Structure probing data (2A3 and DMS) for a 177-nucleotide construct. 2A3 adducts were read by reverse transcription with SuperScript II with manganese. For 2A3, 1,354 sequencing reads were counted. DMS adducts were read by reverse transcription with MarathonRT. The reactions ran in a buffer of 150 mM KOAc, 10 mM MgCl2 and 150 mM bicine (pH 8.5), at 24 C.
RNA sequence: GGGAACGACUCGAGUAGAGUCGAAAAAUACUGGUCUUGUGUCAUUUAGGCCACUUGGAUUUAAAAAAAAUGAAAAGGAUCCAGUCCACCUUCAGAAAGGAAAAAAAUGGCCCUUCCUGUGCUAAGGUAUACUCUCUAACUUCGGUUAGAGAGUAUAAAAAGAAACAACAACAACAAC
Reactivity to 2A3 in 0.01 (KOAc 150mM, MgCl2 10mM, bicine 150mM(pH8.5), 24C), signal-to-noise 1, nucleotides 027 to 126: a000u190a030c010u020g010g000u030c020u020u110g030u070g020u090c000a030u030u040u070a050g010g030c020c020a040c060u020u180g020g070a050u080u190u300a160a080a010a010a000a000a010a020u050g030a070a030a010a060g090g000a010u000c020c010a000g010u050c010c020a050c020c000u040u070c040a070g040a180a080a020g010g000a130a000a010a000a000a000a000u070g030g010c020c010c000u000u010c000c020u050g030u030g080c040u050a000a000g010g000
Reactivity to DMS in 0.01 (KOAc 150mM, MgCl2 10mM, bicine 150mM(pH8.5), 24C), signal-to-noise 3, nucleotides 027 to 126: a100u020a040c050u000g000g010u000c020u000u010g030u000g010u000c020a040u010u010u010a090g000g010c030c030a110c130u000u020g010g010a110u020u000u020a000a000a020a060a070a050a120a070u000g000a090a100a090a110g000g000a030u010c010c010a030g010u000c070c040a120c040c020u000u000c090a080g000a080a070a040g010g000a000a020a010a040a040a070a130u000g000g010c040c030c070u000u000c000c010u000g010u000g010c120u000a040a030g010g020